Overview
Conditions: 150 mM KOAc, 10 mM MgCl2 and 150 mM bicine (pH 8.5), 24 C. The record gives the reactivity of an RNA of 177 nucleotides to DMS. The DMS profile rests on 740 reads. DMS adducts were read by reverse transcription with MarathonRT.

RNA sequence: GGGAACGACUCGAGUAGAGUCGAAAAGAUAUGGACAUCUGUCCCGAAUACUGACGUUGAAAUCGGAAACGAUGGAGUCAAUAUUCGAACCAGAUGUCCUAAGUCAAAAGCCAUGUUCGCAUGGCAACAUUUGACAUCGCUUCGGCGAUGUCAAAUGAAAAGAAACAACAACAACAAC
Reactivity to DMS in 0.01 (KOAc 150mM, MgCl2 10mM, bicine 150mM(pH8.5), 24C), signal-to-noise 1, nucleotides 027 to 126: g000a070u000a300u000g020g010a020c000a010u000c000u000g000u010c090c120c030g010a010a000u000a000c080u000g010a000c000g000u000u010g020a110a110a010u000c040g010g010a150a080a150c010g010a000u000g000g050a090g010u010c000a010a010u000a000u010u000c000g000a110a130c110c010a000g000a000u000g000u000c030c000u010a000a030g010u000c050a060a080a110a110g010c000c000a000u010g030u010u000c200g000c000a000u000g000g000c000a030a090